Structure probing data (2A3 and DMS) for a 177-nucleotide construct. DMS adducts were read by reverse transcription with MarathonRT. The reactions ran in a buffer of 150 mM KOAc, 10 mM MgCl2 and 150 mM bicine (pH 8.5), at 24 C. The 2A3 profile rests on 2,172 reads. For 2A3 the reverse transcriptase was SuperScript II with manganese.

[RMDB]
RNA sequence: GGGAACGACUCGAGUAGAGUCGAAAACGUCAAGGAUUCGUCCUUGACGAAAGUCGCGGCAUGAGGGCGUAUACGGCUGCGCACACACACGACCCUCAAGCCAAACAGGUGGAUUCGUCCACCUGAACAUUGCCAAAAGCUUCGGCUUUUGGCAAUGAAAAGAAACAACAACAACAAC
Reactivity to 2A3 in 0.01 (KOAc 150mM, MgCl2 10mM, bicine 150mM(pH8.5), 24C), signal-to-noise 2, nucleotides 027 to 126: c000g000u000c010a010a010g010g020a010u000u100c140g080u060c040c000u000u000g010a000c000g000a000a000a010g050u060c010g000c060g070g000c020a020u040g000a010g000g010g000c020g020u010a060u010a070c050g050g000c010u080g060c120g020c060a050c010a000c000a000c000a020c100g300a300c010c000c000u000c000a000a010g040c000c000a050a090a070c010a000g020g000u020g000g020a020u010u040c110g020u040c030c000a010c000c000u000g000a010a000
Reactivity to DMS in 0.01 (KOAc 150mM, MgCl2 10mM, bicine 150mM(pH8.5), 24C), signal-to-noise 2, nucleotides 027 to 126: c020g000u000c020a000a020g000g000a030u000u000c200g030u000c000c000u000u000g060a020c000g000a000a040a060g010u000c070g010c240g000g010c010a130u000g020a060g010g000g010c010g010u000a100u010a110c160g000g020c040u010g010c120g000c070a080c100a040c150a080c120a060c040g020a180c020c020c000u000c020a040a050g010c000c010a090a130a220c000a010g000g030u000g010g000a040u000u000c190g030u000c000c000a020c000c000u010g010a070a100